[RMDB]
RNA sequence: GGGAACGACUCGAGUAGAGUCGAAAAGAUCUGCCUUACACAGGUUCACGUGCUCACGUCAAAGUAAUGGUGGUUUCAGUGCUACAGCACCAACUACUUUAACAUGGAUGAUCUGUACGACAGAUACCAAACAUCCGCGUUUCGACGCGGAUGUUUGAAAAGAAACAACAACAACAAC
Reactivity to DMS in 0.01 (KOAc 150mM, MgCl2 10mM, bicine 150mM(pH8.5), 24C), signal-to-noise 1, nucleotides 027 to 126: g010a110u010c010u000g000c000c000u000u040a090c110a060c070a010g000g000u050u000c110a100c110g030u030g000c070u000c020a160c010g020u020c050a050a000a100g000u000a000a140u000g020g000u000g000g030u000u000u040c190a200g000u000g000c050u050a010c280a160g000c020a000c030c050a050a000c120u000a000c000u030u040u010a110a010c100a140u000g000g000a110u060g020a000u000c000u000g000u000a070c110g000a050c020a000g000a000u030a050c140
Reactivity to 2A3 in 0.01 (KOAc 150mM, MgCl2 10mM, bicine 150mM(pH8.5), 24C), signal-to-noise 3, nucleotides 027 to 126: g040a010u030c000u070g030c010c000u060u060a020c070a000c010a060g030g000u070u050c040a030c030g010u130g040c010u060c030a030c020g100u130c060a140a200a070g040u050a060a080u080g010g040u010g050g030u010u040u070c060a040g030u010g070c040u140a180c070a080g000c000a000c010c020a000a000c000u050a020c000u090u090u150a160a060c080a040u140g120g000a110u050g050a020u010c010u000g000u030a020c140g060a010c020a000g010a000u040a090c070
Structure probing data (DMS and 2A3) for a 177-nucleotide construct. The 2A3 profile rests on 1,343 reads. The reactions ran in a buffer of 150 mM KOAc, 10 mM MgCl2 and 150 mM bicine (pH 8.5), at 24 C. It was measured as part of the RMDB library OK1LIB. The DMS profile rests on 1,144 reads.